[RMDB]
RNA sequence: GGGAACGACUCGAGUAGAGUCGAAAAAUGGCCAUUGAUAGCAUCAAUUUCUGAAGGAGAAAUGGUAGCAUAUUCAAUCGCCGAUUGAAUACACCGCUGUACGCCAAGAGGGUUAGGUGCCGUCAUAAGCUAAAUCGAGGUUCGCCUCGAUUUAGCUAAAAGAAACAACAACAACAAC
Reactivity to 2A3 in 0.01 (KOAc 150mM, MgCl2 10mM, bicine 150mM(pH8.5), 24C), signal-to-noise 1, nucleotides 027 to 126: a030u070g080g050c020c020a030u040u000g020a040u010a000g010c030a020u030c030a020a300u080u160u020c040u120g180a240a140g130g130a070g000a000a060a000u020g040g040u060a090g060c040a080u040a040u020u140c000a000a000u040c110g120c300c060g000a010u010u010g020a040a000u040a000c080a010c030c020g050c010u030g060u060a040c060g050c030c000a050a030g040a030g080g000g000u060u050a080g000g040u010g020c030c000g010u010c000a030u030a160
Reactivity to DMS in 0.01 (KOAc 150mM, MgCl2 10mM, bicine 150mM(pH8.5), 24C), signal-to-noise 1, nucleotides 027 to 126: a080u010g020g020c000c000a070u000u000g010a050u010a060g010c010a050u000c020a090a060u000u000u000c000u010g000a170a170g000g020a070g070a070a040a040u000g000g000u000a080g050c080a140u000a040u000u000c000a000a000u000c130g020c190c090g000a060u010u000g010a020a020u010a100c120a080c090c050g020c030u000g000u000a090c100g000c030c030a000a130g010a110g000g000g000u000u010a070g030g000u000g030c050c030g000u000c060a030u000a030